[RMDB]
RNA sequence: GGGAACGACUCGAGUAGAGUCGAAAACUUGGCGGGUAUUUACCAACCAUUGGCAAAGGAUCUGUUCAAUGCCGCAUUUGUGUCAUGUUGGACUGAGCUUUACCAUACUUAUCAAGAAGAACUAGUUCACUCGAUUGACCUUGCCCUUACGGCUCGAGAUUAGGUGACUGUUCGCAGUCACCUAAUCAAAAGAAACAACAACAACAAC
Reactivity to DMS in 0.01 (KOAc 150mM, MgCl2 10mM, bicine 150mM(pH8.5), 24C), signal-to-noise 2, nucleotides 027 to 156: c040u000u000g020g040c100g010g110g020u020a090u010u000u000a040c000c000a060a100c030c050a160u000u000g030g020c030a100a140a140g030g030a030u000c050u010g040u000u000c040a030a080u020g020c090c090g070c050a250u000u000u000g060u000g060u000c080a120u000g030u010u000g020g010a010c030u000g000a100g020c000u000u010u000a120c010c030a090u000a130c050u010u000a110u000c040a060a090g020a130a110g010a080a060c060u000a040g000u000u000c040a060c020u020c100g020a120u000u000g010a090c060c040u000u010g000c030c030c050u010u010a130c080g030g070c000u010c010g020a300
Reactivity to 2A3 in 0.01 (KOAc 150mM, MgCl2 10mM, bicine 150mM(pH8.5), 24C), signal-to-noise 5, nucleotides 027 to 156: c040u040u050g080g010c030g000g000g020u110a110u050u200u210a130c050c020a030a000c030c030a060u030u080g020g000c060a020a020a050g080g010a200u010c030u060g050u070u110c010a030a000u030g060c050c010g000c030a050u050u140u300g110u030g030u070c030a040u050g090u140u050g050g010a030c010u040g010a010g030c000u070u030u040a070c030c010a040u030a130c050u130u120a100u250c060a090a010g100a050a010g030a020a070c030u050a050g060u050u040c020a000c070u050c050g100a080u020u090g030a040c010c020u000u090g010c000c000c000u030u150a070c070g040g010c020u010c050g100a110
Source information:
The data come from the RNA Mapping Database (RMDB), library OK3TST. Chemical mapping of a 207-nucleotide RNA with DMS and 2A3. DMS adducts were read by reverse transcription with MarathonRT. For 2A3 the reverse transcriptase was SuperScript II with manganese. Values cover nucleotides 27 to 156. For DMS, 2,376 sequencing reads were counted. For 2A3, 2,489 sequencing reads were counted.